Structure probing data (2A3 and DMS) for a 177-nucleotide construct. DMS adducts were read by reverse transcription with MarathonRT. It was measured as part of the RMDB library TTRDES. The reactions ran in a buffer of 150 mM KOAc, 10 mM MgCl2 and 150 mM bicine (pH 8.5), at 24 C. 2A3 adducts were read by reverse transcription with SuperScript II with manganese.
RNA sequence: GGGAACGACUCGAGUAGAGUCGAAAAGAUAUGGACAUAUAUUAACAGCAACAGCGUGGCUCGGAAACGAGCCACGACAUGCUGAGUAUGAUGUCCUAAGUCAAAACCUUGGGCUUCGGCCCAAGGACCCGAAUAGAAAGUUCGCUUUCUAUUCGGGAAAAGAAACAACAACAACAAC
Reactivity to 2A3 in 0.01 (KOAc 150mM, MgCl2 10mM, bicine 150mM(pH8.5), 24C), signal-to-noise 3, nucleotides 027 to 126: g020a020u080a070u130g000g000a000c000a000u030a020u030a030u120u280a300a200c020a120g070c020a030a080c020a170g060c000g010u010g000g040c010u000c030g000g040a090a100a070c010g010a000g020c010c050a000c010g020a010c010a000u130g010c000u010g020a000g010u020a010u140g300a020u020g000u010c000c000u010a110a010g070u030c030a000a000a170a300c000c000u020u010g000g000g010c020u080u100c300g160g000c000c000c000a000a000g000g000a010
Reactivity to DMS in 0.01 (KOAc 150mM, MgCl2 10mM, bicine 150mM(pH8.5), 24C), signal-to-noise 3, nucleotides 027 to 126: g010a050u000a300u000g000g020a020c000a020u000a020u010a040u010u010a090a220c020a020g010c010a020a200c190a220g000c010g000u010g000g000c000u000c000g030g000a100a070a230c000g000a010g010c030c000a010c000g000a010c130a110u000g040c000u000g000a130g010u000a000u010g000a010u000g010u000c010c000u000a070a160g000u010c010a100a090a140a220c000c000u000u000g000g000g020c000u000u010c300g020g010c000c000c000a000a000g000g010a020